The record gives the reactivity of an RNA of 177 nucleotides to DMS and 2A3.
The reactions ran in a buffer of 150 mM KOAc, 10 mM MgCl2 and 150 mM bicine (pH 8.5), at 24 C.
The DMS profile rests on 1,275 reads.
As a SHAPE reagent, 2A3 marks flexible, mostly unpaired nucleotides at the ribose 2'-OH.
[RMDB]
RNA sequence: GGGAACGACUCGAGUAGAGUCGAAAAUAUGAAUCUGAACCGGAUCAGAACGAGUUUCAAUCUGUGCUACAAAUGCUGUACUUAUGAAACAUCCAUCUUUUUAGUCUCCGCACAGACCGGAAUAUGCCCAUAGGUGGCCAUUCGUGGCCACCUAUGGAAAAGAAACAACAACAACAAC
Reactivity to DMS in 0.01 (KOAc 150mM, MgCl2 10mM, bicine 150mM(pH8.5), 24C), signal-to-noise 1, nucleotides 027 to 126: u140a000u000g000a030a090u020c000u010g020a150a000c040c040g000g000a060u000c050a050g000a070a130c050g000a300g000u000u000u000c000a020a140u000c010u020g000u000g050c090u000a140c160a120a040a080u130g010c010u000g000u030a020c070u000u000a030u000g020a010a050a050c000a100u020c050c100a090u000c030u030u030u010u000u050a050g030u010c010u000c020c000g000c020a100c010a060g010a080c110c000g000g000a020a060u100a100u020g000c270
Reactivity to 2A3 in 0.01 (KOAc 150mM, MgCl2 10mM, bicine 150mM(pH8.5), 24C), signal-to-noise 3, nucleotides 027 to 126: u190a070u110g050a010a020u000c000u010g000a010a050c020c060g020g050a080u030c030a010g000a050a030c040g030a010g080u000u000u080c080a080a140u030c000u010g010u000g050c020u050a090c020a100a140a140u160g010c090u070g070u070a020c010u080u060a050u140g070a100a010a000c080a080u060c010c000a040u060c090u040u060u030u010u050a040g030u030c010u030c060c000g030c010a000c010a090g070a120c010c010g050g000a040a000u160a070u120g000c020